[RMDB]
RNA sequence: GGGAACGACUCGAGUAGAGUCGAAAAGAGCGGAAACACAGAUUUGGAGAAUGCACCAGCAGGAUACUAUAGUUCCCAUGAUAACGACGUUAAUGGCGUUGCAGAAGAUGAACGUCCAUCUCAUGAAUGAGUAUAUUAGCUUCGGCUAAUAUACUCAAAAAGAAACAACAACAACAAC
Reactivity to DMS in 0.01 (KOAc 150mM, MgCl2 10mM, bicine 150mM(pH8.5), 24C), signal-to-noise 7, nucleotides 027 to 126: g010a100g010c050g010g000a070a080a070c080a060c090a060g000a120u000u010u000g010g010a080g010a140a080u000g000c040a070c070c100a070g010c070a050g000g000a090u000a040c080u000a060u010a110g020u010u000c000c010c010a090u010g010a070u010a060a100c140g000a050c040g010u000u010a070a090u010g010g010c040g010u000u000g010c070a080g010a070a080g010a060u010g000a090a070c050g000u010c030c090a060u000c070u000c060a100u000g000a120a110
Reactivity to 2A3 in 0.01 (KOAc 150mM, MgCl2 10mM, bicine 150mM(pH8.5), 24C), signal-to-noise 2, nucleotides 027 to 126: g030a000g020c040g050g000a090a100a010c050a020c040a100g060a110u080u060u100g040g010a080g040a130a040u060g020c020a020c030c010a040g000c010a010g090g000a030u050a100c070u030a010u040a210g000u000u000c000c000c000a040u060g030a020u030a050a040c080g040a000c060g050u110u120a070a030u170g060g000c030g060u020u040g040c000a010g050a200a010g040a030u090g010a030a000c020g060u040c040c010a020u030c000u030c060a060u080g080a130a080